[RMDB]
RNA sequence: GGGAACGACUCGAGUAGAGUCGAAAAAUUGCGACUGUUCAUCAGGUCGCAUCGUCCCAUGACGGCUCCGACGACGGCACCGGUUCUGACGACAUGGGUGACUAUAACGGCGACGGGCACGGCAGUGCGCUACUGAAUCUUUCGAGAUUCAGUAGCGAAAAGAAACAACAACAACAAC
Reactivity to 2A3 in 0.01 (KOAc 150mM, MgCl2 10mM, bicine 150mM(pH8.5), 24C), signal-to-noise 9, nucleotides 027 to 126: a000u050u030g010c000g000a010c010u040g070u240u150c140a210u080c040a150g040g090u010c000g000c000a010u030c030g030u000c010c000c000a000u040g020a010c010g010g010c040u030c110c020g050a060c020g010a010c020g040g010c010a020c020c010g030g000u080u030c100u160g160a100c090g010a010c020a090u180g170g000g010u030g020a030c040u120a070u070a300a030c020g020g000c020g010a020c020g020g020g000c180a070c050g030g000c020a030g060u090g120
Reactivity to DMS in 0.01 (KOAc 150mM, MgCl2 10mM, bicine 150mM(pH8.5), 24C), signal-to-noise 9, nucleotides 027 to 126: a070u000u000g010c000g010a030c000u000g000u010u010c280a140u010c160a200g010g010u000c000g020c000a010u000c130g000u000c000c000c000a130u000g000a060c040g010g010c020u010c020c010g020a120c050g010a060c060g000g010c010a040c020c010g000g000u000u000c060u010g010a140c210g000a050c050a050u010g010g010g010u000g010a110c260u010a110u010a160a110c040g000g000c010g020a130c050g000g000g010c030a070c030g000g010c040a040g010u010g010